[RMDB]
RNA sequence: GGGAACGACUCGAGUAGAGUCGAAAACAGCUUGCGUUGCGCCUUGGUCGUAGCGACUUUCACGAUACGCCAGUUACGCAGUAUGUAUUCGUGCAUUUCGGCCUUGAUCCAGUGCACCGCGAAGGAACUAAGCUAUUCAUUUCGAUGAAUAGCUUAGAAAAGAAACAACAACAACAAC
Reactivity to 2A3 in 0.01 (KOAc 150mM, MgCl2 10mM, bicine 150mM(pH8.5), 24C), signal-to-noise 9, nucleotides 027 to 126: c010a010g100c030u060u070g000c020g020u000u010g010c010g020c020c050u040u070g020g010u060c030g040u040a010g030c010g030a040c000u030u070u050c050a030c020g010a010u010a010c020g020c040c040a120g050u170u090a110c160g020c060a050g050u160a100u290g030u010a050u050u210c020g000u000g000c010a010u030u030u040c120g200g000c030c000u040u110g010a040u040c010c010a010g010u010g020c010a010c000c010g010c010g030a040a040g050g010a030a030
Reactivity to DMS in 0.01 (KOAc 150mM, MgCl2 10mM, bicine 150mM(pH8.5), 24C), signal-to-noise 9, nucleotides 027 to 126: c060a130g000c080u000u010g010c020g010u000u000g010c030g020c100c120u000u000g010g020u000c010g020u000a050g010c020g000a060c100u000u000u000c060a060c000g000a040u000a010c010g010c060c070a170g010u010u010a090c210g010c080a100g010u000a070u010g020u000a050u010u010c030g010u000g000c060a020u000u000u000c060g030g020c070c090u000u000g000a050u010c020c190a100g000u000g000c010a020c030c030g010c040g010a050a080g000g000a100a200